[RMDB]
RNA sequence: GGGAACGACUCGAGUAGAGUCGAAAAGGCAGGAGGGGACUCUCGGGUCCGUCGUUCCAUCCUUUUCUUACCUUGUGGCCGGCAUGGCCCCAGCCUCCUCGCUGGCGCCGGCUGGGCAACGAUCCGACCUUGUAACUAAGUUCGCUUAGUUACAAGGAAAAGAAACAACAACAACAAC
Reactivity to DMS in 0.01 (KOAc 150mM, MgCl2 10mM, bicine 150mM(pH8.5), 24C), signal-to-noise 6, nucleotides 027 to 126: g000g020c230a090g010g000a080g020g000g010g010a030c020u000c040u010c300g010g010g000u000c020c040g010u010c040g010u010u000c010c010a130u010c020c000u000u000u000u000c050u010u000a120c040c030u000u010g010u000g010g010c020c000g000g020c020a070u010g020g000c010c150c000c000a020g000c000c120u010c200c130u000c200g000c000u000g010g010c300g020c010c010g000g010c010u000g010g010g000c020a050a050c070g000a080u010c030c040g000a280
Reactivity to 2A3 in 0.01 (KOAc 150mM, MgCl2 10mM, bicine 150mM(pH8.5), 24C), signal-to-noise 3, nucleotides 027 to 126: g010g010c040a030g020g040a010g040g050g020g020a000c010u020c040u060c210g110g010g010u030c050c030g050u060c010g130u070u010c010c000a100u090c010c000u020u050u050u070c030u090u160a160c040c000u070u160g080u070g100g040c020c020g040g000c070a170u160g050g010c000c000c000c040a000g000c000c010u170c020c010u100c090g030c000u010g010g020c000g030c000c000g030g000c000u000g030g020g000c010a070a030c070g040a090u050c060c010g030a060
Structure probing data (DMS and 2A3) for a 177-nucleotide construct. The RNA was probed in 150 mM KOAc, 10 mM MgCl2 and 150 mM bicine (pH 8.5) at 24 C. The 2A3 profile rests on 5,150 reads. For DMS the reverse transcriptase was MarathonRT. 2A3 is a SHAPE reagent: it acylates the 2'-hydroxyl of flexible nucleotides of all four kinds.